[RMDB]
RNA sequence: GGGAACGACUCGAGUAGAGUCGAAAAAGCGGAGACUGCCUGCGUGGAAGAGUGGACGGCGAAACAUGGCAGUGCUGCGGAUGACAAGGCCCUGCUCAAGGACGCCCUAACGUUGAUCCGGGAGGCGAUCAUAAAACGCCUUCGGGCGUUUUAUGAUAAAAGAAACAACAACAACAAC
Reactivity to DMS in 0.01 (KOAc 150mM, MgCl2 10mM, bicine 150mM(pH8.5), 24C), signal-to-noise 1, nucleotides 027 to 126: a040g000c110g010g010a120g000a030c060u000g010c000c040u000g030c080g040u020g000g010a060a100g000a140g040u000g000g000a090c150g010g000c060g000a090a080a070c070a120u000g000g000c070a020g010u000g030c020u030g030c300g020g000a140u000g020a180c160a010a240g000g020c010c050c020u010g000c020u030c080a100a080g000g000a150c060g010c070c010c040u010a160a040c080g020u000u010g010a120u020c000c000g000g020g020a070g000g000c050g000